An RNA of 177 nucleotides, treated with 2A3 and DMS and read out base by base. DMS adducts were read by reverse transcription with MarathonRT.
RNA sequence: GGGAACGACUCGAGUAGAGUCGAAAAUUAGGCGCAUAGUCUGGCAGGCCGGGGCGAUAGGCUUGCAGCAGACCCAUGCCGUCCGGUUUGGCACCGGCUUUCCAGGCCAUAUUAAUCCCGUCGCCGUUAGAUCUAAUACAUUCGUGUAUUAGAUCUAAAAAGAAACAACAACAACAAC
Reactivity to 2A3 in 0.01 (KOAc 150mM, MgCl2 10mM, bicine 150mM(pH8.5), 24C), signal-to-noise 9, nucleotides 027 to 126: u120u060a070g010g000c010g010c030a040u030a050g000u010c000u000g000g000c010a000g010g000c000c000g010g010g010g010c050g080a080u070a080g030g010c020u020u090g010c030a020g040c020a010g030a150c000c030c030a040u050g010c000c010g040u070c010c020g060g030u070u100u100g130g000c010a010c010c000g000g000c000u020u020u010c000c000a010g010g000c000c010a040u080a060u110u170a080a080u050c010c010c010g040u050c010g000c000c000g000u000
Reactivity to DMS in 0.01 (KOAc 150mM, MgCl2 10mM, bicine 150mM(pH8.5), 24C), signal-to-noise 9, nucleotides 027 to 126: u030u020a090g010g010c000g020c300a070u010a100g000u000c010u000g000g000c070a020g000g010c000c000g010g000g010g020c010g010a070u040a070g010g000c230u000u010g010c060a060g000c060a040g000a100c080c080c070a140u010g000c000c060g000u010c040c040g010g010u000u010u010g000g020c050a070c020c010g000g000c050u000u000u000c010c010a030g000g000c010c050a040u010a080u020u020a100a130u000c000c000c010g000u030c010g010c000c000g020u020